[RMDB]
RNA sequence: GGGAACGACUCGAGUAGAGUCGAAAAUACUCACAGAAAAAGGAAAAUUCAUUAGCCAAAUGAAUCGCUGAUUUAAAUUCAGGCAAUAGGUUGACAUUAUCCUUAAUUGAAUAGUUUUAGAAAAUGAAUCUAUGUAGAUCCAGAUCAAAUUCUAACCAAUAGAUGCUAACUUCGGUUAGCAUCUAUUAAAAGAAACAACAACAACAAC
Reactivity to DMS in 0.01 (KOAc 150mM, MgCl2 10mM, bicine 150mM(pH8.5), 24C), signal-to-noise 1, nucleotides 027 to 156: u030a060c030u010c000a150c190a190g010a040a030a080a090a130g000g000a130a130a010a040u000u000c110a050u010u010a110g040c020c100a080a180a150u010g010a060a030u000c040g000c050u000g000a090u000u030u000a040a070a160u030u000c010a040g030g000c050a050a090u020a050g000g010u000u000g060a070c030a030u010u000a080u020c030c010u000u000a060a200u000u000g000a140a100u000a080g000u000u000u000u000a060g000a070a040a060a140u000g000a020a030u000c010u000a190u000g020u010a070g000a030u020c010c030a020g000a140u010c040a010a030a130u000u000c010u020a050a110c160c100
Description: This 207-nucleotide RNA was probed chemically with DMS. It was measured as part of the RMDB library OK3TST. DMS adducts were read by reverse transcription with MarathonRT. For DMS, 1,761 sequencing reads were counted.